[RMDB]
RNA sequence: GGGAACGACUCGAGUAGAGUCGAAAAGUACGACAACUUAUUACGCAUCAUCGUACGAUAGAUGCUAAGAUUAGUGGCGAAAGCCACAAGCACGGGCAUUCAUACGUCAGAUCCGAGAGGAUUUGACGUCCUAGCCUGUGCAAGACUAGGUCAGACAACUCCGUGAGCUAUUCGUAGCUCACGGAGUAAAAGAAACAACAACAACAAC
Reactivity to 2A3 in 0.01 (KOAc 150mM, MgCl2 10mM, bicine 150mM(pH8.5), 24C), signal-to-noise 2, nucleotides 027 to 156: g060u040a000c050g030a050c000a070a050c090u080u060a030u190u100a100c060g000c000a000u000c000a000u000c000g110u180a050c170g020a000u020a110g020a020u050g020c020u020a030a000g030a120u080u200a010g020u000g000g000c000g020a000a050a000g000c000c020a000c000a000a000g000c000a000c000g020g000g010c000a020u060u200c050a090u220a070c000g000u040c000a000g000a020u000c000c000g060a070g010a000g080g000a000u000u000u000g000a000c000g000u000c000c000u060a040g010c000c000u000g010u000g010c020a000a000g000a040c060u100a060g150g000u050c030a010g020a070c030a030
Conditions: 150 mM KOAc, 10 mM MgCl2 and 150 mM bicine (pH 8.5), 24 C. The record gives the reactivity of an RNA of 207 nucleotides to 2A3. The data come from the RNA Mapping Database (RMDB), library OK3TST.